[RMDB]
RNA sequence: GGGAACGACUCGAGUAGAGUCGAAAAGAAUUGGUAUGUAAGCUACACCUUCCGGUAGCUGCGUCACACUUUAAGAGUGUGCAUACUGAGCCGAAGCUCAGCUUCGGUCCCCCAAGGGAAGUCCAAAAAUAGCGUCGUAGUUCGCUACGACGCUAUUAAAAGAAACAACAACAACAAC
Reactivity to DMS in 0.01 (KOAc 150mM, MgCl2 10mM, bicine 150mM(pH8.5), 24C), signal-to-noise 2, nucleotides 027 to 126: g010a080a080u000u000g000g030u000a000u030g000u000a300a170g000c000u000a000c000a020c130c000u030u000c000c010g000g000u010a000g030c000u000g000c000g000u000c000a020c000a000c000u000u030u000a180a100g000a010g010u000g000u020g030c000a000u000a000c000u000g020a040g010c000c000g000a010a000g020c000u080c180a180g000c010u000u000c000g000g000u000c080c060c000c160c070a110a040g030g010g000a030a040g000u060c110c120a060a050a030
Reactivity to 2A3 in 0.01 (KOAc 150mM, MgCl2 10mM, bicine 150mM(pH8.5), 24C), signal-to-noise 3, nucleotides 027 to 126: g070a010a100u000u000g000g000u000a010u010g000u000a010a010g000c000u000a000c030a050c030c020u000u000c000c000g000g000u000a000g010c010u020g000c010g000u010c000a000c000a000c020u130u180u300a300a150g210a010g300u000g000u000g040c000a000u000a000c000u000g000a000g010c010c000g000a000a010g000c010u080c300a030g000c010u010u010c000g000g010u000c000c000c000c010c020a030a040g020g000g000a000a020g080u110c140c030a060a060a010
Description: This 177-nucleotide RNA was probed chemically with DMS and 2A3. For 2A3, 1,340 sequencing reads were counted. Values are in units of 0.01, from 0 to 300, in steps of 10. For DMS the reverse transcriptase was MarathonRT. It was measured as part of the RMDB library OK1LIB. The RNA was probed in 150 mM KOAc, 10 mM MgCl2 and 150 mM bicine (pH 8.5) at 24 C.